[RMDB]
Source: RMDB library M2RFPK, as collected in RNAgym. The record gives the reactivity of an RNA of 207 nucleotides to 2A3 and DMS. The 2A3 profile rests on 697 reads. DMS adducts were read by reverse transcription with MarathonRT. The reactions ran in a buffer of 150 mM KOAc, 10 mM MgCl2 and 150 mM bicine (pH 8.5), at 24 C. For 2A3 the reverse transcriptase was SuperScript II with manganese.
RNA sequence: GGGAACGACUCGAGUAGAGUCGAAAAGAGCGGCAGAGGGACUGGCCCGAUGAAGCCCGGCAACCUAACUUUAUUUAAGCGUAAAGUGAAGGUGCUAAUUCCAGCGAAAUGGUGUAUUCCGUUUUGGUUUAUCCGCCCUGGUUCGCCAGGGCGGAAACUUGAAGGAAUACUUCGGUAUUCCUUCAAGAAAAGAAACAACAACAACAAC
Reactivity to 2A3 in 0.01 (KOAc 150mM, MgCl2 10mM, bicine 150mM(pH8.5), 24C), signal-to-noise 1, nucleotides 027 to 156: g030a010g030c190g010g000c000a010g020a000g010g010g000a010c010u030g000g010c000c050c010g000a110u020g010a020a010g010c000c000c010g000g000c020a080a060c000c000u030a020a010c010u020u000u040a050u120u120u130a210a100g090c020g040u000a010a000a000g020u030g060a120a020g000g000u000g030c000u030a060a000u080u080c000c010a000g050c040g020a020a020a020u030g030g000u070g070u160a060u140u070c010c020g010u030u010u030u060g060g000u010u050u160a020u020c010c020g000c000c000c000u010g000g030u020u030c120g050c120c010a000g020g000g000c010g000g010a000a000a000
Reactivity to DMS in 0.01 (KOAc 150mM, MgCl2 10mM, bicine 150mM(pH8.5), 24C), signal-to-noise 1, nucleotides 027 to 156: g010a080g030c070g020g080c040a070g000a220g000g010g010a120c030u000g020g010c010c020c020g030a170u000g020a080a190g000c000c010c050g030g010c030a010a030c000c000u000a180a000c020u000u000u000a010u010u000u000a160a160g050c300g010u000a000a030a030g060u000g010a070a060g030g020u000g020c010u000a030a080u000u000c000c030a060g010c040g060a030a050a100u000g010g020u000g020u010a080u000u010c010c000g000u000u010u010u000g010g000u000u000u000a080u000c000c000g070c020c000c020u000g020g020u000u020c300g020c000c000a000g010g010g000c000g010g000a000a000a010

The DMS profile rests on 2,851 reads.